[RMDB]
RNA sequence: GGGAACGACUCGAGUAGAGUCGAAAACUCUGCUAAUUCGUUAGCAGAGGUACACUGGGACCGGUCGGGAGGGGGAUACUCGCGGUCCCAAGAAGAAUCCAGCAAGCACAUUAUUCGUAAUGUGCAAUACGCUCCCAUAAUUCGUUAUGGGAGCGUAAAAAGAAACAACAACAACAAC
Reactivity to 2A3 in 0.01 (KOAc 150mM, MgCl2 10mM, bicine 150mM(pH8.5), 24C), signal-to-noise 1, nucleotides 027 to 126: c000u000c000u000g000c010u020a040a010u060u060c140g070u110u020a000g000c000a000g000a000g000g000u020a060c060a020c040u000g000g000g000a000c000c000g020g210u260c020g050g070g020a300g070g020g010g000g000a020u070a120c000u000c000g000c000g010g000u000c000c000c000a000a010g020a020a000g040a000a050u000c010c000a020g070c080a210a030g020c000a000c000a010u000u020a020u050u100c120g040u030a000a000u010g000u000g020c000a000a000
Reactivity to DMS in 0.01 (KOAc 150mM, MgCl2 10mM, bicine 150mM(pH8.5), 24C), signal-to-noise 2, nucleotides 027 to 126: c000u000c000u010g020c000u000a020a030u000u010c170g010u000u000a000g010c000a040g010a010g010g000u000a050c170a240c100u000g000g000g000a040c000c000g000g000u010c000g010g000g020a120g000g000g000g000g010a100u010a020c000u000c000g000c040g000g000u000c000c000c000a000a000g010a160a150g000a150a100u000c000c030a160g020c190a120a100g010c000a000c000a000u000u000a030u010u000c250g000u000a000a000u000g010u000g000c020a110a070
An RNA of 177 nucleotides, treated with 2A3 and DMS and read out base by base. High DMS reactivity at an A or C suggests that its Watson-Crick edge is free. The RNA was probed in 150 mM KOAc, 10 mM MgCl2 and 150 mM bicine (pH 8.5) at 24 C. For DMS, 1,453 sequencing reads were counted. For DMS the reverse transcriptase was MarathonRT. Source: RMDB library M2PK50, as collected in RNAgym.